This 177-nucleotide RNA was probed chemically with DMS. The reactions ran in a buffer of 150 mM KOAc, 10 mM MgCl2 and 150 mM bicine (pH 8.5), at 24 C.
RNA sequence: GGGAACGACUCGAGUAGAGUCGAAAAGAUAUGGAGCUAUACUUGAUAUUUCAAUCAGGCAUCGAUCAGGUCGGUCGGAAACGACCGCCUGGGAGCCUGAUUGAAAUAUCAAGUAGCUCCUAAGUCACGACAUUAAAGAGUUCGCUCUUUAAUGUCGAAAAGAAACAACAACAACAAC
Reactivity to DMS in 0.01 (KOAc 150mM, MgCl2 10mM, bicine 150mM(pH8.5), 24C), signal-to-noise 1, nucleotides 027 to 126: g030a070u010a300u010g020g000a030g030c010u010a130u000a120c020u000u020g020a010u000a030u000u000u010c000a010a010u000c000a000g010g000c000a300u000c180g010a090u030c010a000g000g030u000c060g040g000u000c000g000g000a070a180a240c000g000a010c000c010g030c010c010u000g000g000g010a040g040c010c000u000g000a000u010u000g010a010a000a000u000a010u000c010a000a010g000u000a000g000c010u000c000c000u000a010a120g010u010c060a300
Values cover nucleotides 27 to 126. Reactivities are rounded to 0.1 and cut off at 0 and 3. The DMS profile rests on 1,198 reads.